[RMDB]
RNA sequence: GGGAACGACUCGAGUAGAGUCGAAAAGAUAUGGAGUGCUCCCAUAGAAGAGGCAUUGGAGGGCUUUCGGAAACGAAAGCCUACCCACCCAAUGAACUACCUCGGAUAUGGGAGCACUCCUAAGUCACAUCAUUAUUGGCUUCGGCCAAUAAUGAUGAAAAGAAACAACAACAACAAC
Reactivity to DMS in 0.01 (KOAc 150mM, MgCl2 10mM, bicine 150mM(pH8.5), 24C), signal-to-noise 1, nucleotides 027 to 126: g030a030u020a300u010g000g000a070g060u000g000c000u020c010c000c000a010u000a070g000a300a130g000a020g000g020c000a000u000u000g000g030a210g000g010g000c000u000u000u000c010g000g000a050a020a150c000g040a000a000a000g000c000c000u010a010c110c080c200a300c060c000c030a010a010u000g000a070a030c080u080a300c000c010u000c000g010g000a300u000a000u000g000g000g000a010g000c000a000c000u000c000c000u000a000a040g000u000c000a300